[RMDB]
RNA sequence: GGGAACGACUCGAGUAGAGUCGAAAAUGUCAACGAAACCUAGAAUGUCUUUCCAAGCACCAAGUAACUGGAGAUAAUCCAAGUCUCACUUCCAUAGUCGAAUCACAUAUAGCUAAUGCACGGCGCCUCUCGGACUCCUGUCUAGCUGCCAUCGUACUAUGCUUGAAUCAUUCGUGAUUCAAGCAUAAAAAGAAACAACAACAACAAC
Reactivity to DMS in 0.01 (KOAc 150mM, MgCl2 10mM, bicine 150mM(pH8.5), 24C), signal-to-noise 3, nucleotides 027 to 156: u000g010u000c040a050a250c070g020a070a080a100c060c010u000a080g020a070a060u000g000u010c030u010u000u000c050c020a080a130g020c020a160c020c030a090a120g020u000a090a060c100u000g020g020a090g010a100u000a110a140u000c040c020a050a140g020u000c040u000c040a070c030u000u010c040c000a060u000a070g020u010c030g010a070a160u010c050a030c050a110u000a120u000a080g010c030u010a050a090u010g010c040a030c090g030g010c030g000c030c030u010c040u010c030g010g010a100c050u000c010c000u010g040u000c020u010a220g000c010u000g020c020c060a100u030c040g000u010a160c050
Reactivity to 2A3 in 0.01 (KOAc 150mM, MgCl2 10mM, bicine 150mM(pH8.5), 24C), signal-to-noise 4, nucleotides 027 to 156: u030g010u000c020a050a020c060g100a100a040a050c000c020u040a040g080a180a100u040g010u020c020u000u100u010c010c020a010a010g020c010a040c040c010a090a010g040u060a120a030c070u070g040g020a040g020a070u160a130a040u070c010c000a000a050g020u000c020u020c050a040c030u080u020c040c000a060u050a060g050u060c050g050a080a120u130c070a030c090a100u180a030u060a110g010c010u090a120a040u120g020c010a010c080g030g000c040g010c020c000u060c010u020c020g050g020a090c010u000c030c020u060g040u060c020u020a010g010c020u020g010c030c020a030u040c030g030u010a030c040
An RNA of 207 nucleotides, treated with DMS and 2A3 and read out base by base. Reactivities are given for positions 27 through 156. The 2A3 profile rests on 2,345 reads. The reactions ran in a buffer of 150 mM KOAc, 10 mM MgCl2 and 150 mM bicine (pH 8.5), at 24 C.